Chemical mapping of a 207-nucleotide RNA with 2A3 and DMS.
The reactions ran in a buffer of 150 mM KOAc, 10 mM MgCl2 and 150 mM bicine (pH 8.5), at 24 C.
Source: RMDB library RNAMAK, as collected in RNAgym.
High DMS reactivity at an A or C suggests that its Watson-Crick edge is free.
[RMDB]
RNA sequence: GGGAACGACUCGAGUAGAGUCGAAAAUGGGGUUUCGACCCCAGAGGGUGCGUACUACUUCAGAGGAUGAUGACACAACAGCAGAUCCCAAAUAGGAUCUGACAUGUGUCGCAUCUACCCACCUGAAGUAUCGCGAAGGUCUACAUUCGUGUAGAAACUAACUGGCAGAUUUCGAUCUGCCAGUUAGAAAAGAAACAACAACAACAAC
Reactivity to 2A3 in 0.01 (KOAc 150mM, MgCl2 10mM, bicine 150mM(pH8.5), 24C), signal-to-noise 3, nucleotides 027 to 156: u080g000g000g000g020u050u130u190c290g150a130c000c000c000c040a000g030a050g050g040g020u100g010c040g030u040a110c030u010a000c010u010u020c000a020g000a020g030g010a010u050g060a170u080g010a020c000a000c010a000a200c030a080g070c000a000g000a000u000c100c030c010a110a290a160u280a080g010g000a000u000c010u000g100a080c000a030u030g000u010g010u010c000g000c000a010u000c000u020a040c040c000c020a040c000c000u000g010a000a010g010u030a030u300c010g010c000g000a030a020g050g120u010c000u000a010c010a050u050u210c240g060u090g000u040a030g030a060a070a020
Reactivity to DMS in 0.01 (KOAc 150mM, MgCl2 10mM, bicine 150mM(pH8.5), 24C), signal-to-noise 1, nucleotides 027 to 156: u000g000g000g110g030u030u000u010c190g010a010c000c010c010c030a000g020a080g010g020g030u000g000c000g000u000a150c150u000a010c010u000u010c030a010g010a110g020g000a010u000g010a110u000g030a030c000a010c000a040a060c120a160g000c000a020g010a010u000c000c010c020a030a170a200u000a090g020g010a030u000c000u000g000a020c110a300u000g000u000g020u000c110g050c010a000u000c020u000a020c060c020c020a300c140c010u000g000a000a000g000u000a000u000c020g000c000g000a140a080g000g000u010c000u010a010c000a130u000u010c200g070u040g030u000a040g000a070a080a300